The record gives the reactivity of an RNA of 207 nucleotides to DMS and 2A3. It was measured as part of the RMDB library OK3TST. Values cover nucleotides 27 to 156. For DMS the reverse transcriptase was MarathonRT. For DMS, 4,816 sequencing reads were counted. 2A3 is a SHAPE reagent: it acylates the 2'-hydroxyl of flexible nucleotides of all four kinds.
RNA sequence: GGGAACGACUCGAGUAGAGUCGAAAACAGUGUCUGAAAUACCCUCAUUUUAAUGUGACAGGUCACUUUUCUCACCUCAACAUUUUGGACAUACCUCAUUUCCAACAAACAUUUGUUACUUCUGAUAGAGAGUCUGCUGUCAUUCUCAUACUUGUUCAAGAUUGCUUACAUUCGUGUAAGCAAUCUUAAAAGAAACAACAACAACAAC
Reactivity to DMS in 0.01 (KOAc 150mM, MgCl2 10mM, bicine 150mM(pH8.5), 24C), signal-to-noise 2, nucleotides 027 to 156: c040a190g000u000g020u000c020u020g000a070a050a090u000a110c020c020c010u020c020a120u000u000u000u000a080a090u020g020u000g040a070c090a070g010g040u000c050a060c070u000u020u000u010c020u000c010a050c060c010u000c060a090a090c060a140u000u000u010u000g000g020a080c040a090u000a020c040c020u010c030a120u000u000u000c010c030a070a080c060a100a060a180c060a160u000u000u010g000u000u010a070c040u030u000c040u000g010a100u000a110g010a100g010a070g030u000c060u010g020c020u010g000u000c020a160u010u000c020u000c040a220u000a100c080u010u000g010u000u000c090
Reactivity to 2A3 in 0.01 (KOAc 150mM, MgCl2 10mM, bicine 150mM(pH8.5), 24C), signal-to-noise 5, nucleotides 027 to 156: c050a010g010u010g020u030c030u040g060a060a060a070u170a130c020c020c020u040c040a060u070u110u110u230a230a090u160g000u000g030a040c050a030g030g040u090c020a030c000u060u010u130u010c040u010c020a060c020c030u090c040a050a100c030a130u050u050u050u060g050g010a020c020a040u090a090c010c040u080c030a070u030u050u040c030c020a020a020c020a070a190a010c030a120u080u070u100g050u060u050a070c040u040u110c030u060g030a050u070a090g050a010g000a010g050u030c040u110g030c010u000g040u060c020a060u110u020c020u000c010a080u140a190c020u060u080g040u150u180c020